[RMDB]
RNA sequence: GGGAACGACUCGAGUAGAGUCGAAAAAGCCGAUAGCCUGUCCAGCAACCUAGUGCCUGAAGUGCCUUGCGAUCGAGCAAUUCCGCCUCCUGACAUCCAUAAAAUCAGGCGUCAGGUUACGCAAUCACUGAGUAAAUUAGUUCGCUAAUUUACUCAGAAAAGAAACAACAACAACAAC
Reactivity to DMS in 0.01 (KOAc 150mM, MgCl2 10mM, bicine 150mM(pH8.5), 24C), signal-to-noise 9, nucleotides 027 to 126: a120g020c040c030g030a100u000a100g010c030c020u010g000u000c040c040a090g020c050a060a090c060c040u000a070g030u000g010c020c020u010g010a080a070g010u000g010c040c030u000u010g020c060g010a070u010c070g010a080g000c060a060a140u000u000c050c050g010c040c030u000c010c020u000g010a050c050a060u010c030c060a110u010a060a060a100a110u010c130a070g010g010c300g010u000c020a020g010g000u000u010a060c110g010c120a080a080u010c150a170
Reactivity to 2A3 in 0.01 (KOAc 150mM, MgCl2 10mM, bicine 150mM(pH8.5), 24C), signal-to-noise 6, nucleotides 027 to 126: a000g060c020c020g030a070u080a030g010c010c020u040g030u040c030c020a020g030c010a040a080c000c020u070a040g060u020g110c010c010u050g040a110a020g050u050g090c020c000u020u060g020c020g070a090u120c020g010a040g060c010a030a050u110u030c020c030g030c030c010u030c000c000u010g000a020c000a060u030c020c010a050u170a150a150a030a080u140c060a040g010g020c000g010u010c010a000g010g000u010u020a030c040g000c020a020a070u110c020a030

An RNA of 177 nucleotides, treated with DMS and 2A3 and read out base by base. Values cover nucleotides 27 to 126. Conditions: 150 mM KOAc, 10 mM MgCl2 and 150 mM bicine (pH 8.5), 24 C. The DMS profile rests on 13,631 reads.